[RMDB]
RNA sequence: GGGAACGACUCGAGUAGAGUCGAAAAGGAUGCCCAGGUCGGACCGCGGGGAGGUGGAGAUGCCAUGCCGACCCGAAGAGGAAAGAAGGACUCGGACGCGAACCCGUGAGUGGAACCUUGGUCUUUUGAGCAGAGACCUUCGGGUCUCUGAAAAGAAACAACAACAACAAC
Reactivity to 2A3 in 0.01 (KOAc 150mM, MgCl2 10mM, bicine 150mM(pH8.5), 24C), signal-to-noise 3, nucleotides 027 to 129: g070g020a060u120g020c000c000c000a010g030g070u050c000g040g040a030c000c020g030c010g000g000g000g000a020g010g020u050g000g000a090g000a020u200g030c000c010a070u140g010c020c020g010a020c000c000c000g010a010a010g050a020g010g050a020a060a010g030a020a020g000g000a020c000u000c050g000g030a030c070g000c000g020a030a040c000c020c010g030u070g040a050g000u060g040g000a020a000c000c000u010u040g020g000u010c000u020u100u030u090g080a080g080
Reactivity to DMS in 0.01 (KOAc 150mM, MgCl2 10mM, bicine 150mM(pH8.5), 24C), signal-to-noise 3, nucleotides 027 to 129: g040g020a090u050g010c110c020c040a030g030g060u030c070g080g020a080c060c100g040c070g000g000g000g000a090g010g080u020g000g000a090g010a140u070g000c060c080a070u070g040c080c020g010a120c070c020c070g000a060a040g040a000g000g030a000a000a000g020a080a040g000g000a050c000u000c000g010g030a030c110g000c070g000a060a070c060c030c030g070u000g000a060g010u020g030g020a100a100c040c020u060u030g030g010u020c030u000u000u000u000g020a140g030